RNA sequence: GGGAACGACUCGAGUAGAGUCGAAAACUAUUUAUAGACAGAACAGUGGAAAACGUAUAUCGCUAUAAACCUUAUACCCCGACUCUUCCAGUCGUACGAUUCCACAUAGGCGAGGCAUAAGCGAAAGCGGAUGAUUUAUGUUCGCAUAAAUCAUCCGAAAAGAAACAACAACAACAAC
Reactivity to 2A3 in 0.01 (KOAc 150mM, MgCl2 10mM, bicine 150mM(pH8.5), 24C), signal-to-noise 6, nucleotides 027 to 126: c000u010a070u010u120u030a100u050a040g080a040c060a040g060a180a040c040a050g050u080g060g080a120a100a040a000c020g020u040a090u020a010u140c020g000c030u020a020u060a110a050a050c010c010u110u070a070u090a160c020c010c010c000g030a030c020u010c020u100u000c020c030a020g000u010c000g000u010a020c040g030a040u070u010c000c000a030c010a030u050a040g050g000c030g030a020g040g000c040a050u030a150a020g030c030g110a110a020a010g120
Reactivity to DMS in 0.01 (KOAc 150mM, MgCl2 10mM, bicine 150mM(pH8.5), 24C), signal-to-noise 4, nucleotides 027 to 126: c040u010a090u010u020u020a050u020a060g010a100c120a190g000a040a070c080a060g000u010g000g000a070a020a050a080c080g020u000a030u010a110u000c080g010c020u010a050u010a060a050a090c110c060u020u010a060u010a080c010c070c060c030g000a020c030u000c080u000u020c040c050a050g000u010c040g010u000a060c070g000a140u010u010c020c010a030c090a080u030a040g000g000c020g000a090g000g000c070a050u010a020a060g010c060g000a030a090a090g000

This 177-nucleotide RNA was probed chemically with 2A3 and DMS. For 2A3 the reverse transcriptase was SuperScript II with manganese. DMS adducts were read by reverse transcription with MarathonRT.